[RMDB]
RNA sequence: GGGAACGACUCGAGUAGAGUCGAAAAAUCCCGGGGAACUCGGCGAAUCGUCCCCACAUAGCAGCUCCCGGACCCCCUUCAAAGAGACCGAGGGGGGUGGCUUGGAGCGCGGGGGGGAAGCGCCGGGCGAUACAGUAAUCUUCGGAUUACUGUAUCGAAAAGAAACAACAACAACAAC
Reactivity to DMS in 0.01 (KOAc 150mM, MgCl2 10mM, bicine 150mM(pH8.5), 24C), signal-to-noise 1, nucleotides 027 to 126: a120u000c000c000c000g010g000g010g010a250a250c020u000c000g030g040c010g000a050a050u000c040g000u000c000c010c000c010a210c170a190u020a110g000c010a110g050c000u010c000c000c200g020g020a120c000c000c000c000c030u000u000c020a060a080a160g020a140g000a090c300c110g020a010g000g010g000g000g010g030u000g000g020c030u010u000g000g020a020g000c000g020c020g000g090g010g040g000g010g010a020a020g020c070g000c000c020g020g000g010

An RNA of 177 nucleotides, treated with DMS and read out base by base. It was measured as part of the RMDB library VIROID. DMS adducts were read by reverse transcription with MarathonRT. Conditions: 150 mM KOAc, 10 mM MgCl2 and 150 mM bicine (pH 8.5), 24 C. Reactivities are given for positions 27 through 126.